[RMDB]
RNA sequence: GGGAACGACUCGAGUAGAGUCGAAAAUGCAAGUAGUGCUAUUGUUGGAAUCACCGUACCUAUUUAGGUUUACGCUCCAAGAUCGGUGGAUAGCAGCCCUAUCAAUAUAUAGGAGAACUGUGCUAUGAAAACGGUAUUGGCUUCGGCCAAUACCGAAGUAAAUGAUCUGCUUCGGCAGAUCAUUUACAAAAGAAACAACAACAACAAC
Reactivity to DMS in 0.01 (KOAc 150mM, MgCl2 10mM, bicine 150mM(pH8.5), 24C), signal-to-noise 1, nucleotides 027 to 156: u010g010c070a080a150g010u010a050g000u000g020c010u020a040u000u010g000u020u000g000g000a150a130u010c030a030c000c010g090u030a040c020c000u000a170u010u000u010a010g020g020u000u020u010a060c120g040c120u010c020c020a050a140g000a020u000c000g010g010u010g020g010a080u000a030g000c020a050g000c040c010c010u010a070u000c040a200a180u000a140u000a120u000a030g030g010a110g040a070a100c050u010g000u020g010c050u000a070u010g000a070a080a110a210c020g020g000u020a010u000u000g010g030c060u000u010c300g080g060c010c000a010a010u010a000c010c000g000a000a000
Reactivity to 2A3 in 0.01 (KOAc 150mM, MgCl2 10mM, bicine 150mM(pH8.5), 24C), signal-to-noise 2, nucleotides 027 to 156: u110g030c040a050a080g100u110a030g080u080g020c030u040a050u140u030g130u090u080g080g020a100a070u080c040a040c010c000g010u050a020c020c010u100a190u200u170u200a040g040g020u020u030u090a080c050g000c060u060c010c040a080a030g020a230u120c030g010g000u000g000g040a050u030a000g000c010a000g000c020c000c000u020a020u030c030a250a020u060a030u130a000u000a150g000g030a070g020a100a110c040u040g040u070g110c000u020a040u170g050a010a060a020a050c000g000g000u010a000u000u010g000g000c000u020u010c110g060g000c020c000a000a000u000a000c000c000g000a000a000
An RNA of 207 nucleotides, treated with DMS and 2A3 and read out base by base. The RNA was probed in 150 mM KOAc, 10 mM MgCl2 and 150 mM bicine (pH 8.5) at 24 C. It was measured as part of the RMDB library M2RFPK. For 2A3, 900 sequencing reads were counted. 2A3 is a SHAPE reagent: it acylates the 2'-hydroxyl of flexible nucleotides of all four kinds. 2A3 adducts were read by reverse transcription with SuperScript II with manganese.